[RMDB]
RNA sequence: GGGAACGACUCGAGUAGAGUCGAAAAGUGGGUUGGGUGGUCGCCCUGAUAUUCGCGGUGUGCAUGAUCCUGCGCCUGGCGCGGUUCAACACGCUGCUCGACGACGAUGACCAGCCACCGUUCAGCAAGGAGUUCUUCGUAGGGGUGCCCGCACCGGCAGGAGGACAGAGUUCGCUCUGUCCUCCUGAAAAGAAACAACAACAACAAC
Reactivity to 2A3 in 0.01 (KOAc 150mM, MgCl2 10mM, bicine 150mM(pH8.5), 24C), signal-to-noise 2, nucleotides 027 to 156: g090u130g020g050g050u090u060g050g000g090u050g030g020u100c030g000c000c030c000u140g060a140u170a120u300u190c000g000c020g000g000u010g000u000g070c190a130u060g010a040u030c020c130u240g020c040g040c110c220u230g100g010c000g010c030g000g000u050u080c030a040a000c020a010c060g010c030u050g020c030u020c060g080a100c050g000a000c060g040a040u050g020a010c010c030a000g020c020c020a020c070c010g040u090u180c030a060g040c000a090a020g060g030a180g080u110u080c070u070u070c080g020u110a050g000g020g020g020u020g000c000c000c020g040c010a030c090c040g010g000